[RMDB]
RNA sequence: GGGAACGACUCGAGUAGAGUCGAAAAGCAAAACAUUAUCCAGGUGUAGCGGUGAAAUUCGUAGAGAUCUGGUGGAUAAUGAACCGGUGGCGAAGGCGAAAGAUAACCGCUGAAAAGAAGAAUUGAAGAUUCAAUAAAUGUUCGCAUUUAUUGAAUCAAAAGAAACAACAACAACAAC
Reactivity to 2A3 in 0.01 (KOAc 150mM, MgCl2 10mM, bicine 150mM(pH8.5), 24C), signal-to-noise 1, nucleotides 027 to 126: g030c010a000a060a050a090c010a040u060u070a030u120c030c010a030g080g010u050g050u110a000g000c010g000g030u010g030a070a030a030u060u010c020g000u050a030g010a010g010a230u030c030u070g010g060u070g040g060a080u120a230a100u120g040a040a040c020c000g000g080u050g040g020c080g050a030a010g110g000c020g010a030a050a000g180a010u000a010a030c000c000g000c020u050g030a020a040a000a010g110a040a010g030a040a050u140u130g030a090a040
Reactivity to DMS in 0.01 (KOAc 150mM, MgCl2 10mM, bicine 150mM(pH8.5), 24C), signal-to-noise 7, nucleotides 027 to 126: g020c090a060a060a070a120c030a040u000u000a050u000c020c030a120g010g010u010g010u000a050g020c000g010g020u010g000a090a120a080u000u000c020g010u000a110g020a130g010a100u000c010u010g010g010u000g010g010a100u000a070a070u010g010a110a050c020c010g000g010u010g010g010c300g010a090a110g000g010c020g010a030a030a030g010a100u000a130a030c010c010g020c010u000g000a050a050a070a080g000a080a070g010a090a100u010u000g000a140a120
The record gives the reactivity of an RNA of 177 nucleotides to 2A3 and DMS. Values cover nucleotides 27 to 126. Conditions: 150 mM KOAc, 10 mM MgCl2 and 150 mM bicine (pH 8.5), 24 C. The 2A3 profile rests on 3,687 reads. It was measured as part of the RMDB library M2PK90.